[RMDB]
RNA sequence: GGGAACGACUCGAGUAGAGUCGAAAAAUACUUCUCAGGAUGGCGCGUUGCAGUCCAACAAGAUCCAGGGACUGUACAGAAUUUUCCUAUACCUCGAGUCGGCUUUGGAAUCUAAGGUUGACUCGCUAAAACUUUACGUGGUUCGCCACGUAAAGAAUCGACGUGUAAUCUUCGGAUUACACGUCGAAAAAGAAACAACAACAACAAC
Reactivity to 2A3 in 0.01 (KOAc 150mM, MgCl2 10mM, bicine 150mM(pH8.5), 24C), signal-to-noise 1, nucleotides 027 to 156: a000u200a180c130u060u070c010u040c060a010g000g100a020u030g030g060c040g010c090g220u120u030g000c000a000g000u000c000c000a000a050c060a160a070g090a190u060c090c040a060g030g000g040a000c000u010g000u040a000c010a000g260a120a080u110u130u030u090c040c000u130a060u030a150c050c050u040c000g000a000g030u000c000g000g050c000u020u000u000g060g180a140a040u080c000u060a060a050g010g000u020u000g010a000c000u020c000g000c030u080a050a050a050a030c000u000u000u000a000c000g010u000g010g000u040u050c150g010c140c000a000c020g000u020a020a000a000g000a000a040